The record gives the reactivity of an RNA of 177 nucleotides to DMS.
It was measured as part of the RMDB library OK2TST.

RNA sequence: GGGAACGACUCGAGUAGAGUCGAAAAGAACAAGCGCGCGGCCGGCUCUGGCUCCCCGGAGAUAAAAACCGAGCGUAUGGCGGCAGCAAAAGGUGCGGGCCAGGUGCUCGCUCGGCAGGCAACCUGGCGCAUGCCGUAGUUUCGACUACGGCAUGCGAAAAGAAACAACAACAACAAC
Reactivity to DMS in 0.01 (KOAc 150mM, MgCl2 10mM, bicine 150mM(pH8.5), 24C), signal-to-noise 1, nucleotides 027 to 126: g000a190a180c060a110a130g040c040g020c040g000c040g050g040c000c030g000g000c040u000c010u000g000g030c110u020c060c170c030c060g010g000a050g020a210u010a010a060a060a110a100c050c000g000a040g000c030g000u000a060u020g010g020c000g010g030c010a120g040c040a110a070a150a120g000g000u000g000c030g020g020g030c030c000a050g000g010u000g020c030u000c030g000c020u010c070g000g010c150a040g000g010c010a030a070c020c010u000g000g000
For DMS, 939 sequencing reads were counted. Reactivities are rounded to 0.1 and cut off at 0 and 3.